[RMDB]
RNA sequence: GGGAACGACUCGAGUAGAGUCGAAAAUCAAAGUUGAACAAAGUUGAACAUGGAUCAAAGCCACACACUCGGUUUCAACGUACCUGGGCAGUAAACAAAGGAAUACAGUUGUUCCAUGGAUAUUAUGGAGCUAUAUUAGCUUCGGCUAAUAUAGCUCAAAAGAAACAACAACAACAAC
Reactivity to 2A3 in 0.01 (KOAc 150mM, MgCl2 10mM, bicine 150mM(pH8.5), 24C), signal-to-noise 2, nucleotides 027 to 126: u180c000a020a020a020g000u020u020g030a000a000c110a170a080a010g020u070u120g050a010a000c000a020u000g010g000a000u010c080a030a000a000g020c030c000a010c000a000c030a000c140u090c090g010g020u030u120u140c030a050a060c080g120u060a000c000c000u000g000g010g000c040a030g070u170a130a000a090c120a080a220a100g130g010a060a040u170a100c030a040g070u010u000g010u020u000c000c030a000u000g020g000a000u030a010u260u020a100u240g090
Reactivity to DMS in 0.01 (KOAc 150mM, MgCl2 10mM, bicine 150mM(pH8.5), 24C), signal-to-noise 3, nucleotides 027 to 126: u090c030a090a100a040g000u000u000g000a040a180c100a080a100a160g010u000u000g000a040a230c000a070u020g000g000a030u020c000a060a140a170g000c010c020a030c130a050c100a070c110u000c090g030g000u000u000u010c080a060a090c140g000u000a020c020c050u010g010g000g000c010a080g010u000a020a050a100c210a010a100a120g000g010a100a110u050a040c190a120g040u030u000g030u000u010c020c000a000u010g010g010a080u030a090u040u010a080u010g010
This 177-nucleotide RNA was probed chemically with 2A3 and DMS. The RNA was probed in 150 mM KOAc, 10 mM MgCl2 and 150 mM bicine (pH 8.5) at 24 C. DMS adducts were read by reverse transcription with MarathonRT. For 2A3, 721 sequencing reads were counted.